[RMDB]
RNA sequence: GGGAACGACUCGAGUAGAGUCGAAAAGAUAUGGAUGCCAGGUGGCAAGGAAUGCGAUCGGAAACGAUCGUAGAUUUCUGAUGACCCACUGGCAUCCUAAGUCAAAAGGGAACGUUCGCGUUCCCAACGUUCUAACACUGUUCGCAGUGUUAGAACGAAAAGAAACAACAACAACAAC
Reactivity to DMS in 0.01 (KOAc 150mM, MgCl2 10mM, bicine 150mM(pH8.5), 24C), signal-to-noise 3, nucleotides 027 to 126: g000a030u000a270u000g010g010a020u000g010c010c020a070g020g020u000g010g000c060a100a080g000g000a030a040u000g010c000g000a000u000c010g020g000a070a080a170c000g010a010u000c000g020u010a020g000a150u000u000u000c000u000g020a230u020g020a300c300c000c020a040c000u000g010g000c010a010u000c000c000u010a010a060g000u000c020a060a080a150a150g020g000g010a030a010c010g000u000u020c290g020c030g020u010u000c000c000c000a010a020
Reactivity to 2A3 in 0.01 (KOAc 150mM, MgCl2 10mM, bicine 150mM(pH8.5), 24C), signal-to-noise 2, nucleotides 027 to 126: g010a000u020a010u100g000g000a000u010g010c000c010a050g190g140u070g010g070c110a060a220g070g000a000a000u030g000c000g000a000u000c000g000g000a070a040a010c000g010a010u020c000g000u010a000g070a050u070u130u000c040u080g230a300u290g240a290c000c000c040a030c000u010g000g000c010a000u010c000c000u000a000a000g010u000c020a000a000a060a180g040g000g010a000a020c020g020u080u090c300g020c010g170u000u000c000c000c010a000a010

Structure probing data (DMS and 2A3) for a 177-nucleotide construct. 2A3 adducts were read by reverse transcription with SuperScript II with manganese. The 2A3 profile rests on 5,154 reads.